[RMDB]
RNA sequence: GGGAACGACUCGAGUAGAGUCGAAAAGGGUCUUCGAAGCAGUUGCAAAGAAAUGCCCAGAUGGAGGACAGAGGGCCAAACCACCCCAGUGAAUUCAUAACAGGAGAUAACUUGCUUAAGACCUGACGACUAAUAGACGGUUCGCCGUCUAUUAGUCAAAAGAAACAACAACAACAAC
Reactivity to DMS in 0.01 (KOAc 150mM, MgCl2 10mM, bicine 150mM(pH8.5), 24C), signal-to-noise 1, nucleotides 027 to 126: g000g000g020u020c000u000u000c300g000a100a060g060c000a040g000u000u050g000c160a090a060a130g020a000a080a050u000g010c030c000c040a140g040a110u000g050g000a040g000g000a220c020a010g000a240g070g000g020c030c060a160a010a090c050c190a170c050c000c010c000a100g000u050g050a210a210u000u000c020a000u010a030a090c160a020g060g020a090g020a040u010a110a140c000u000u000g020c050u000u000a020a060g000a070c020c000u000g000a070c240
Reactivity to 2A3 in 0.01 (KOAc 150mM, MgCl2 10mM, bicine 150mM(pH8.5), 24C), signal-to-noise 1, nucleotides 027 to 126: g030g000g010u010c000u030u040c130g110a030a010g040c000a010g000u000u010g020c010a070a090a060g080a050a180a040u100g040c030c010c000a000g000a010u040g000g010a050g000g050a010c020a000g160a210g020g010g010c060c060a090a060a090c030c010a020c000c000c000c000a050g010u070g300a050a040u000u030c000a020u050a210a150c030a050g000g000a080g000a070u050a060a010c000u060u240g000c000u000u000a000a000g000a020c000c000u010g020a020c090
Source information: Structure probing data (DMS and 2A3) for a 177-nucleotide construct. The 2A3 profile rests on 1,133 reads. Conditions: 150 mM KOAc, 10 mM MgCl2 and 150 mM bicine (pH 8.5), 24 C. DMS adducts were read by reverse transcription with MarathonRT. The data come from the RNA Mapping Database (RMDB), library RFMREP. For 2A3 the reverse transcriptase was SuperScript II with manganese. The DMS profile rests on 613 reads.